This 177-nucleotide RNA was probed chemically with 2A3 and DMS.
[RMDB]
RNA sequence: GGGAACGACUCGAGUAGAGUCGAAAAUGAUCGAUAGAUUGUAAGGUUUGUCGGUCGUUUUAAUCGUGUCUUACAACACGAUGAUGUUACCCCAUAAUGACCUGAGAGGUAUGAGGCGAUACCCGUACCACGGACGGGAGUUCGCUCCCGUCCGUGGAAAAGAAACAACAACAACAAC
Reactivity to 2A3 in 0.01 (KOAc 150mM, MgCl2 10mM, bicine 150mM(pH8.5), 24C), signal-to-noise 2, nucleotides 027 to 126: u040g000a000u000c000g000a000u010a040g060a000u080u150g200u300a160a140g150g000u000u000u000g030u000c000g000g000u000c030g000u000u010u000u000a040a000u000c000g000u000g000u000c130u170u150a020c040a000a000c030a000c010g010a010u000g010a020u140g060u100u050a130c000c000c000c000a050u020a190a070u190g130a080c030c030u050g060a070g010a000g080g010u040a000u070g070a040g170g000c050g000a000u000a070c000c000c020g000u030a140
Reactivity to DMS in 0.01 (KOAc 150mM, MgCl2 10mM, bicine 150mM(pH8.5), 24C), signal-to-noise 1, nucleotides 027 to 126: u000g000a000u000c000g050a000u010a130g000a010u030u170g010u050a040a190g000g000u000u000u000g000u000c030g020g020u000c000g020u000u000u000u030a210a070u000c010g000u000g000u000c050u020u080a160c300a200a000c030a000c000g000a000u000g000a090u030g000u040u030a110c240c020c040c210a110u070a110a070u010g050a030c000c060u000g000a060g000a030g020g040u000a060u010g000a030g060g000c060g000a190u000a250c000c040c030g020u000a070
The RNA was probed in 150 mM KOAc, 10 mM MgCl2 and 150 mM bicine (pH 8.5) at 24 C. High 2A3 reactivity points to a flexible backbone, as in loops and unpaired stretches. The 2A3 profile rests on 821 reads.